[RMDB]
RNA sequence: GGGAACGACUCGAGUAGAGUCGAAAAGUGGUGGGGGCGGGCAGGCUCGCGUUCGGGGGCCGGCCGAGCAGGUAGGUCUUCGGGAUGUAAAGCAGCUGGCCGGGGUCCCGCGGAAACUCGGCCGUGGGAUCAUUAAUAGGUUCGCCUAUUAAUGAUCAAAAGAAACAACAACAACAAC
Reactivity to DMS in 0.01 (KOAc 150mM, MgCl2 10mM, bicine 150mM(pH8.5), 24C), signal-to-noise 2, nucleotides 027 to 126: g010u000g000g000u010g030g000g000g000g000c090g000g000g060c080a070g030g000c040u000c090g030c050g030u000u000c080g030g000g000g020g020c030c010g000g040c000c010g000a080g000c110a080g020g010u000a050g010g000u000c030u010u010c040g010g010g000a080u010g020u010a080a070a140g020c080a070g010c080u010g000g000c010c020g000g000g000g020u000c030c030c050g000c160g000g000a060a060a060c050u000c050g000g020c000c010g000u010g010g010
Reactivity to 2A3 in 0.01 (KOAc 150mM, MgCl2 10mM, bicine 150mM(pH8.5), 24C), signal-to-noise 1, nucleotides 027 to 126: g120u080g000g010u110g020g060g000g050g100c110g020g030g000c020a020g020g040c020u010c050g060c030g070u110u050c030g060g020g040g000g000c000c000g000g010c040c000g030a040g060c060a020g040g080u110a000g000g030u010c000u020u050c070g080g030g000a020u020g050u240a100a120a110g050c030a020g030c050u130g000g040c000c000g020g000g000g020u020c010c010c010g040c010g010g020a060a070a010c020u020c000g000g020c010c000g010u090g020g020
The record gives the reactivity of an RNA of 177 nucleotides to DMS and 2A3. Source: RMDB library OK2TRN, as collected in RNAgym. For DMS the reverse transcriptase was MarathonRT.